The record gives the reactivity of an RNA of 207 nucleotides to 2A3.
RNA sequence: GGGAACGACUCGAGUAGAGUCGAAAAACUUCAGAUCUGGUCGAUUUACAAAAAAAUGGAGCAGGUAUACUAUAACAAAAUGUAAAGGCCACUCAAACUGAGGCAAUUACAGCAAUAAUACCUACGAUUUGGCGCCCUAUUACUACUACUGUAUUGCCCAAUAGCAAGCCUUCGGGCUUGCUAUUGGAAAAGAAACAACAACAACAAC
Reactivity to 2A3 in 0.01 (KOAc 150mM, MgCl2 10mM, bicine 150mM(pH8.5), 24C), signal-to-noise 1, nucleotides 027 to 156: a000c000u070u060c000a020g030a100u000c010u000g030g030u000c030g110a170u000u000u150a070c080a060a080a000a060a000a060a140u070g080g000a140g090c090a010g000g010u010a040u030a090c030u040a010u110a300a020c000a050a100a010a000u180g000u010a000a050a050g030g000c000c010a050c020u030c060a100a000a000c030u070g060a030g000g020c000a040a000u070u020a030c000a000g050c040a080a040u120a100a020u040a160c000c000u010a010c030g100a110u050u020u100g090g000c000g000c010c020c010u000a060u170u100a040c060u100a000c010u120a030c020u000g070u080a170u120u170g040c180